Chemical mapping of a 207-nucleotide RNA with DMS and 2A3. For 2A3 the reverse transcriptase was SuperScript II with manganese. For DMS the reverse transcriptase was MarathonRT. The RNA was probed in 150 mM KOAc, 10 mM MgCl2 and 150 mM bicine (pH 8.5) at 24 C. Values cover nucleotides 27 to 156.
RNA sequence: GGGAACGACUCGAGUAGAGUCGAAAAGGCAAAAAAUACUCUGUAGUGAUUUAGAAUCACAUACUAGCAAAAAUACUGCUUAAGCUAAUAGGUCACACAUCUGGCAGCUCCCUGGGAAUAUAAGAGACUCACCUGUCUCCGUGUGUGGAAAAGGCAACUAUUAACGAAGGUUCGCCUUCGUUAAUAGAAAAGAAACAACAACAACAAC
Reactivity to DMS in 0.01 (KOAc 150mM, MgCl2 10mM, bicine 150mM(pH8.5), 24C), signal-to-noise 1, nucleotides 027 to 156: g030g050c070a010a020a110a120a120a240u000a040c030u000c040u000g050u000a050g020u000g000a030u000u000u000a120g000a210a110u000c020a040c020a120u020a040c030u010a070g030c030a000a070a050a080a150u010a100c100u000g020c000u000u000a060a060g030c040u000a130a040u030a080g000g000u000c050a000c030a060c080a100u000c020u000g000g020c080a100g030c030u000c020c130c020u000g020g010g040a130a070u020a130u020a060a140g010a110g000a070c010u000c050a050c120c070u000g020u000c030u000c010c030g000u010g030u000g020u010g010g000a030a070a060a200g030g020c020a050a170
Reactivity to 2A3 in 0.01 (KOAc 150mM, MgCl2 10mM, bicine 150mM(pH8.5), 24C), signal-to-noise 2, nucleotides 027 to 156: g040g000c040a050a020a000a010a070a060u130a110c040u060c110u100g040u070a110g000u010g010a010u010u080u160a130g080a110a040u010c000a000c000a040u120a010c090u130a030g030c080a060a090a060a060a080u090a110c090u050g020c010u140u100a090a000g020c000u020a060a000u030a290g010g050u080c020a010c010a000c010a020u050c060u060g070g000c010a010g040c010u070c030c000c010u020g010g000g000a080a040u120a020u070a190a060g020a000g010a090c000u020c060a080c040c040u020g020u040c020u040c040c020g060u090g000u010g000u030g050g000a000a140a000a020g050g000c010a030a020